[RMDB]
RNA sequence: GGGAACGACUCGAGUAGAGUCGAAAACGUUCCAUUCUUUCUUACCUUGUGGCCGGCAUGGUCCCAGCCUCCUCGCUGGCGCCGGCUGGGCAACAUUCCGAGGGGACCGUCCCCUCGGUAAUGGCGAUAACCAGACCGUUCGCGGUCUGGAAAAGAAACAACAACAACAAC
Reactivity to DMS in 0.01 (KOAc 150mM, MgCl2 10mM, bicine 150mM(pH8.5), 24C), signal-to-noise 4, nucleotides 027 to 129: c070g000u000u030c000c000a140u020u020c150u040u000u010c080u050u040a080c040c040u000u010g000u000g030g010c000c040g000g040c060a130u020g040g020u050c300c000c030a080g000c000c070u060c120c050u070c280g030c010u010g010g030c150g020c260c030g000g010c000u000g050g000g090c070a100a080c020a060u010u000c000c020g000a080g050g010g000g010a300c210c300g080u110c020c030c060c000u020c020g000g000u050a000a040u060g000g020c210g010a000u000a060a110
Reactivity to 2A3 in 0.01 (KOAc 150mM, MgCl2 10mM, bicine 150mM(pH8.5), 24C), signal-to-noise 3, nucleotides 027 to 129: c020g000u030u000c000c030a120u060u200c060u000u060u000c010u060u080a100c040c020u040u030g040u130g110g080c000c000g000g010c070a170u220g070g010u020c000c020c010a010g000c030c030u070c050c000u100c100g070c010u100g000g000c080g000c020c000g010g050c000u010g040g000g000c000a060a030c020a050u040u000c000c010g000a000g000g000g000g000a050c060c080g300u300c000c010c000c000u000c000g000g010u000a000a000u030g000g000c070g050a020u060a070a040